Background
Conditions: 150 mM KOAc, 10 mM MgCl2 and 150 mM bicine (pH 8.5), 24 C. Chemical mapping of a 177-nucleotide RNA with DMS and 2A3. 2A3 adducts were read by reverse transcription with SuperScript II with manganese. Reactivities are given for positions 27 through 126. DMS adducts were read by reverse transcription with MarathonRT.
RNA sequence: GGGAACGACUCGAGUAGAGUCGAAAAGGGGUGUGCUCAGAGCAGGUGGCCUGAAGAAUGGCUUCUCUGUUUACAACACACCCAAGAAGAAUCUGGGACCAUUGUAAUGAGGGGCACAAGCAGUUCCUAUCUCGGAAGGAUUCGUCCUUCCGAGAUAAAAAGAAACAACAACAACAAC
Reactivity to DMS in 0.01 (KOAc 150mM, MgCl2 10mM, bicine 150mM(pH8.5), 24C), signal-to-noise 3, nucleotides 027 to 126: g010g000g010g040u010g040u010g000c050u000c220a260g010a030g000c000a030g000g030u010g000g000c000c000u000g000a150a100g000a160a110u010g000g010c000u000u000c020u100c020u000g010u000u000u000a140c220a070a140c000a020c040a040c000c000c000a020a020g020a070a100g000a090a030u000c040u010g000g020g010a120c050c020a070u000u000g050u010a060a110u050g010a040g020g000g000g000c110a010c020a060a050g000c110a110g000u000u000c010c020
Reactivity to 2A3 in 0.01 (KOAc 150mM, MgCl2 10mM, bicine 150mM(pH8.5), 24C), signal-to-noise 4, nucleotides 027 to 126: g030g010g000g000u000g000u000g010c020u060c180a040g000a000g050c000a010g000g020u010g030g020c010c020u070g070a100a060g120a190a180u200g000g000c000u040u000c150u000c000u000g030u050u010u010a040c020a070a000c020a000c010a000c000c000c000a000a000g010a010a000g050a030a050u040c090u090g040g000g030a010c020c010a040u010u050g020u070a070a110u140g010a060g020g000g010g010c010a020c020a060a040g030c010a000g020u000u020c000c000